[RMDB]
Source information: An RNA of 177 nucleotides, treated with DMS and 2A3 and read out base by base. Conditions: 150 mM KOAc, 10 mM MgCl2 and 150 mM bicine (pH 8.5), 24 C. For DMS the reverse transcriptase was MarathonRT. Values cover nucleotides 27 to 126.

RNA sequence: GGGAACGACUCGAGUAGAGUCGAAAAGGAUGCUAGAAGACACUUUCUUCAUGGAGUGUAUUGGCAUUCUAGGUUAGCAUGUAGGAGCGGAAGAGGGCGACUGUAUUGCGUAGCGAGAGGUGAAAGUACUAUAAAACUAGUUCGCUAGUUUUAUAGUAAAAGAAACAACAACAACAAC
Reactivity to DMS in 0.01 (KOAc 150mM, MgCl2 10mM, bicine 150mM(pH8.5), 24C), signal-to-noise 9, nucleotides 027 to 126: g010g000a010u000g000c000u000a060g010a110a090g010a020c010a010c000u000u000u010c050u010u010c300a160u010g010g000a010g010u000g010u000a050u000u000g000g010c000a010u000u000c000u000a070g020g010u000u000a060g010c080a050u000g010u000a080g000g000a090g010c100g010g010a070a060g000a100g000g010g010c090g000a070c090u000g000u000a070u000u000g010c060g020u010a050g020c060g000a080g000a080g010g010u000g000a080a070a090g010u000
Reactivity to 2A3 in 0.01 (KOAc 150mM, MgCl2 10mM, bicine 150mM(pH8.5), 24C), signal-to-noise 9, nucleotides 027 to 126: g000g000a000u010g000c010u050a040g050a240a030g090a130c010a010c010u130u180u210c040u250u160c090a160u280g020g000a010g000u010g000u030a050u060u120g000g000c000a000u000u000c010u010a000g030g040u050u100a020g010c050a040u070g040u080a030g010g060a040g020c050g020g040a070a010g020a040g010g030g010c020g020a030c030u030g010u080a100u090u120g010c020g010u010a020g030c020g030a040g000a010g020g040u060g060a090a050a020g050u010